An RNA of 170 nucleotides, treated with 2A3 and DMS and read out base by base. DMS adducts were read by reverse transcription with MarathonRT. The RNA was probed in 150 mM KOAc, 10 mM MgCl2 and 150 mM bicine (pH 8.5) at 24 C. Reactivities are given for positions 27 through 129.
RNA sequence: GGGAACGACUCGAGUAGAGUCGAAAACUCCAUCUGGUCCGUCCGGGCCCUCUUCGCCGGGGGAGCCCCCUCUCCAUCCCUGUCCUUCUUUCCGAGUAUUCCUUUGAUGUUUCCCAGCCAGGGAUUUUAAUCUAACGAUUCGUCGUUAGAAAAAGAAACAACAACAACAAC
Reactivity to 2A3 in 0.01 (KOAc 150mM, MgCl2 10mM, bicine 150mM(pH8.5), 24C), signal-to-noise 9, nucleotides 027 to 129: c020u040c020c000a060u040c050u090g010g010u020c030c040g040u020c030c040g030g020g000c020c010c010u050c040u080u080c040g050c040c020g020g000g010g010g000a020g000c000c000c000c010c010u030c000u000c020c010a070u040c010c000c010u030g050u060c010c000u030u040c000u040u070u010c020c010g020a020g030u060a070u040u080c020c000u060u030u140g070a050u060g050u020u020u020c020c000c000a010g050c050c030a030g030g010g010a010u070u020u020u060a060a070
Reactivity to DMS in 0.01 (KOAc 150mM, MgCl2 10mM, bicine 150mM(pH8.5), 24C), signal-to-noise 9, nucleotides 027 to 129: c070u000c030c050a030u000c060u000g010g010u030c080c000g000u030c060c090g000g000g030c010c000c000u010c020u020u030c130g000c120c060g050g000g020g020g000a100g000c020c000c030c030c000u010c000u030c030c040a110u020c020c000c000u050g020u000c010c010u010u010c020u020u020u020c030c000g030a110g030u050a110u000u020c000c000u010u020u020g050a080u030g020u000u000u000c000c000c000a170g030c100c120a100g050g000g010a030u000u010u000u000a050a160